[RMDB]
RNA sequence: GGGAACGACUCGAGUAGAGUCGAAAAUGAGAAGACCUGUCCUUAGUACGAGAGGACCGGGAUGGACGUACCUCUGGUGUACCAGUUGUCCUGCCAAGGGCAUGGCUGGGUAGCUAUGUACGGAAUGGAUAAGCGCUGAAAGCAUCUAAGCGCGAAAGCCGCUAUAUUAGUUCGCUAAUAUAGCGGCAAAAGAAACAACAACAACAAC
Reactivity to 2A3 in 0.01 (KOAc 150mM, MgCl2 10mM, bicine 150mM(pH8.5), 24C), signal-to-noise 4, nucleotides 027 to 156: u200g000a040g040a140a010g070a080c000c000u010g000u010c000c010u050u040a090g110u130a160c120g060a090g000a010g190g000a010c020c030g000g030g010a030u070g050g020a000c000g000u000a000c000c010u000c020u000g010g040u110g140u300a040c000c000a010g000u020u000g000u010c000c000u040g180c050c080a070a060g020g000g000c020a020u100g080g000c000u000g000g000g000u020a000g000c000u000a000u210g000u010a000c000g010g000a020a040u050g000g020a050u060a150a090g000c000g030c000u010g060a160a080a000g040c010a010u030c040u070a030a000g000c010g020c010g010a020a010a010
Reactivity to DMS in 0.01 (KOAc 150mM, MgCl2 10mM, bicine 150mM(pH8.5), 24C), signal-to-noise 2, nucleotides 027 to 156: u000g000a150g000a070a070g010a040c040c000u010g000u010c010c000u000u000a140g020u000a130c130g010a300g010a050g000g010a040c000c020g010g010g020a200u000g010g010a080c010g000u000a040c020c020u010c020u010g080g000u000g000u010a300c030c010a050g030u010u000g010u000c000c040u000g000c200c260a100a120g020g000g000c040a050u010g000g010c000u000g000g030g020u010a300g000c010u000a010u010g020u000a030c000g000g000a080a080u030g000g000a180u000a030a190g000c010g000c000u000g000a120a070a090g030c110a090u040c070u000a220a070g010c000g050c010g030a030a080a150